[RMDB]
RNA sequence: GGGAACGACUCGAGUAGAGUCGAAAAUCAAUCAUGUUCGCAUGAUUGAAAAGGUCAGGUGACCAAUCCACGACACGCGUCGAAGCGACCGAGCCCGGAGGCAAAGUGCAAUCUUCGGAUUGCACAAGUGAGGCGUAAGUUUCGACUUACGCCUCACAAAAGAAACAACAACAACAAC
Reactivity to 2A3 in 0.01 (KOAc 150mM, MgCl2 10mM, bicine 150mM(pH8.5), 24C), signal-to-noise 1, nucleotides 027 to 126: u010c010a020a010u000c010a000u020g050u020u100c180g050c060a030u010g000a010u000u000g000a060a070a030a020g030g010u020c020a010g100g200u140g170a040c010c050a010a050u000c020c030a080c020g070a000c030a000c100g050c060g020u060c050g050a040a030g090c040g090a010c010c040g000a010g050c000c000c000g000g040a010g010g060c070a130a050a090g010u000g000c000a010a000u000c020u020u100c250g110g000a000u000u000g010c000a010c000a030a000
Reactivity to DMS in 0.01 (KOAc 150mM, MgCl2 10mM, bicine 150mM(pH8.5), 24C), signal-to-noise 1, nucleotides 027 to 126: u000c000a000a010u000c010a080u000g040u010u000c170g040c000a000u050g000a050u000u020g000a010a010a150a130g000g000u000c000a080g000g000u040g000a060c040c120a170a120u000c030c000a160c150g010a050c090a060c170g020c290g000u000c100g010a130a170g040c040g010a050c020c030g020a120g000c060c030c030g000g000a110g000g000c090a110a100a090g000u000g000c000a000a000u000c000u010u020c160g020g000a000u000u010g030c000a000c040a040a030
An RNA of 177 nucleotides, treated with 2A3 and DMS and read out base by base. For DMS, 550 sequencing reads were counted. It was measured as part of the RMDB library M2PK50. Values cover nucleotides 27 to 126. DMS adducts were read by reverse transcription with MarathonRT.